Annotation
Chemical mapping of a 177-nucleotide RNA with DMS and 2A3.
[RMDB]
RNA sequence: GGGAACGACUCGAGUAGAGUCGAAAAUUCGGCCGUGUCGGCGUGCCGCAGCCGGGCGAGUUCGCCCACGAUCCUGUCGCUGACCGCCACCGGAUACGAGUAGCCGGUGUCCUCGAGCGAGCGCAGCGAUUAAGGCCUGUUUCGACAGGCCUUAAUCAAAAGAAACAACAACAACAAC
Reactivity to DMS in 0.01 (KOAc 150mM, MgCl2 10mM, bicine 150mM(pH8.5), 24C), signal-to-noise 7, nucleotides 027 to 126: u010u000c020g010g000c030c010g020u010g010u000c050g020g010c030g020u000g010c070c060g010c130a140g010c070c060g000g000g010c000g010a130g010u010u000c070g010c010c010c000a100c150g010a080u010c080c020u000g000u010c050g010c000u000g000a070c080c090g010c100c010a030c020c010g000g000a050u000a050c130g010a170g010u010a070g010c030c010g000g000u000g000u000c050c060u000c110g010a100g000c030g000a090g010c080g000c050a050g000c130
Reactivity to 2A3 in 0.01 (KOAc 150mM, MgCl2 10mM, bicine 150mM(pH8.5), 24C), signal-to-noise 5, nucleotides 027 to 126: u040u020c000g030g000c020c020g040u060g040u160c060g050g020c080g030u120g030c030c060g020c020a020g050c030c050g020g020g050c030g010a050g140u130u200c050g030c000c000c010a020c030g030a040u070c000c020u060g080u120c020g000c010u020g040a090c020c020g000c010c000a010c000c010g010g020a040u080a170c120g050a140g170u070a040g050c010c000g000g000u020g010u030c010c030u070c050g070a040g020c020g000a020g030c090g010c060a020g030c030

The RNA was probed in 150 mM KOAc, 10 mM MgCl2 and 150 mM bicine (pH 8.5) at 24 C. The data come from the RNA Mapping Database (RMDB), library OK2TRN. For 2A3, 8,803 sequencing reads were counted. For DMS the reverse transcriptase was MarathonRT.